Source: RMDB library RNAMAK, as collected in RNAgym. Chemical mapping of a 207-nucleotide RNA with 2A3. 2A3 adducts were read by reverse transcription with SuperScript II with manganese. The reactions ran in a buffer of 150 mM KOAc, 10 mM MgCl2 and 150 mM bicine (pH 8.5), at 24 C.
RNA sequence: GGGAACGACUCGAGUAGAGUCGAAAAGGGGUCGUGAGGACAUGAUCACCCGCCCGUACAUGGAGCUCUGAAGCCUCCACGGAGCUAUGAAGUGUACGUAACAAGGUGAUCAACAGCCUCACGACGGAGGCACCCAAAAGCCGCCUUCGGGCGGCAAUCAACUUCUAGGGUUCGCCCUAGAAGUUGAAAAAGAAACAACAACAACAAC
Reactivity to 2A3 in 0.01 (KOAc 150mM, MgCl2 10mM, bicine 150mM(pH8.5), 24C), signal-to-noise 2, nucleotides 027 to 156: g050g010g010g000u000c010g000u000g020a000g000g030a090c100a260u140g000a000u000c000a030c000c030c020g070c010c060c010g030u020a000c000a010u030g000g070a000g000c000u000c000u040g040a100a030g020c010c020u060c000c000a010c020g000g000a000g030c000u020a300u300g030a050a020g000u000g000u020a000c020g050u150a060a060c050a080a110g010g010u000g010a000u010c010a000a020c050a050g030c010c000u020c000a000c000g000a010c040g000g030a000g010g010c010a020c000c010c010a120a190a000a100g010c010c000g020c040c000u030u050c200g070g020g000c010g000g040c010a000a070